[RMDB]
RNA sequence: GGGAACGACUCGAGUAGAGUCGAAAACUUAUAUCUCACAUGAAAAGAAAUUGAAUUCCUGUUGUAGAAUCGUUGAGCGCAACGUCGUACGUGCUGCUCUUCUUGCCGGUUCAUUUGACAAAGUCUAAGACCUCAUCGUUCGCGAUGAGGAAAAGAAACAACAACAACAAC
Reactivity to DMS in 0.01 (KOAc 150mM, MgCl2 10mM, bicine 150mM(pH8.5), 24C), signal-to-noise 4, nucleotides 027 to 129: c000u000u000a120u040a030u010c010u040c000a130c150a110u040g040a080a080a190a040g080a130a150a080u070u010g030a190a160u000u030c000c050u020g070u010u030g040u000a100g010a040a050u000c060g030u040u000g000a030g040c060g070c060a000a000c050g000u000c260g020u030a300c060g000u100g020c040u050g030c070u020c020u000u030c090u030u010g020c240c050g020g010u010u040c000a140u050u020u010g030a080c090a050a080a080g050u050c020u020a000a000g010a280
Reactivity to 2A3 in 0.01 (KOAc 150mM, MgCl2 10mM, bicine 150mM(pH8.5), 24C), signal-to-noise 4, nucleotides 027 to 129: c000u080u040a020u000a050u210c050u030c080a170c080a110u300g060a070a250a030a040g080a020a200a030u130u170g010a000a000u000u060c010c000u010g000u030u030g010u110a130g030a000a000u100c040g020u000u040g010a010g030c080g000c010a040a120c010g120u140c060g070u240a140c010g000u000g040c040u060g010c000u000c000u030u000c140u020u080g070c000c010g000g000u000u030c020a020u080u020u110g060a040c060a050a080a000g000u050c020u030a120a090g040a110
Background: Chemical mapping of a 170-nucleotide RNA with DMS and 2A3. Values cover nucleotides 27 to 129. The data come from the RNA Mapping Database (RMDB), library 15KLIB. The 2A3 profile rests on 3,293 reads.